[RMDB]
RNA sequence: GGGAACGACUCGAGUAGAGUCGAAAACGUGUUACUCGGUGAUGAUGCAAUUAGCGGUGAAUUCAAUGUAUUGGGGUAACAGGCUUAAAUUCGUUGAUAACAUUUUGGAAGUGGAGAGAGAUGAUGACCAUUAGCAGCUAUUCGUAGCUGCUAAUGGAAAAGAAACAACAACAACAAC
Reactivity to 2A3 in 0.01 (KOAc 150mM, MgCl2 10mM, bicine 150mM(pH8.5), 24C), signal-to-noise 3, nucleotides 027 to 126: c050g040u070g020u040u080a010c020u000c050g080g080u060g010a040u040g000a020u040g010c010a050a160u050u020a120g010c050g070g040u060g060a030a080u070u070c030a030a030u100g030u040a070u100u120g060g000g000g000u020a040a010c010a030g060g040c000u110u120a020a130a040u120u060c030g020u020u010g030a050u050a120a020c010a050u080u080u090u120g110g040a070a070g010u040g050g010a050g020a000g000a010g010a050u100g030a070u090g040a060
Reactivity to DMS in 0.01 (KOAc 150mM, MgCl2 10mM, bicine 150mM(pH8.5), 24C), signal-to-noise 4, nucleotides 027 to 126: c060g020u000g010u010u000a050c050u000c040g000g030u000g010a070u010g010a090u010g010c160a070a080u010u000a070g020c080g000g000u010g000a080a070u010u000c060a050a040u010g010u010a090u000u000g000g020g000g020u000a040a060c090a070g010g020c040u000u000a050a060a110u010u000c060g020u000u010g010a070u000a050a060c080a070u000u010u000u000g000g010a070a090g020u000g010g000a060g030a060g000a130g010a040u010g010a050u000g010a240

An RNA of 177 nucleotides, treated with 2A3 and DMS and read out base by base. The data come from the RNA Mapping Database (RMDB), library OK2TRN. Reactivities are given for positions 27 through 126. DMS adducts were read by reverse transcription with MarathonRT.